[RMDB]
RNA sequence: GGGAACGACUCGAGUAGAGUCGAAAAUACUGACAGCUAGUAUGAUCGUCUAGCUCAUGCGUCGAGCCAUGGGAUCGAUCGAGCGCUAGUAUACGAGCUCUAGGAUCUAUAGCUGAUCUGAUCGGUACUGGUGUAAGAUCUUCGGAUCUUACACCAGAAAAGAAACAACAACAACAAC
Reactivity to 2A3 in 0.01 (KOAc 150mM, MgCl2 10mM, bicine 150mM(pH8.5), 24C), signal-to-noise 4, nucleotides 027 to 126: u140a010c060u040g030a010c020a000g040c020u030a020g060u130a200u230g030a020u020c020g080u020c270u000a020g010c000u000c010a050u090g010c020g010u030c020g030a030g050c050c030a180u190g110g070g050a050u140c080g020a040u030c030g050a060g090c000g020c030u040a020g100u120a120u070a100c130g000a000g000c010u000c020u040a040g060g030a010u000c030u030a030u060a040g070c000u010g010a160u000c020u030g040a070u060c040g030g020u060a050
Reactivity to DMS in 0.01 (KOAc 150mM, MgCl2 10mM, bicine 150mM(pH8.5), 24C), signal-to-noise 3, nucleotides 027 to 126: u000a110c030u000g010a090c030a050g000c010u000a000g000u000a040u010g000a020u000c020g020u010c020u010a030g040c000u010c000a160u010g010c060g010u000c020g000a040g020c060c050a150u020g020g030g010a140u000c090g000a070u000c050g000a100g000c030g040c020u000a090g010u000a130u010a070c240g000a030g000c010u010c060u010a050g000g020a010u000c010u000a090u000a020g000c030u000g000a120u000c080u010g000a190u000c070g010g010u010a100
Structure probing data (2A3 and DMS) for a 177-nucleotide construct. For DMS the reverse transcriptase was MarathonRT. 2A3 adducts were read by reverse transcription with SuperScript II with manganese.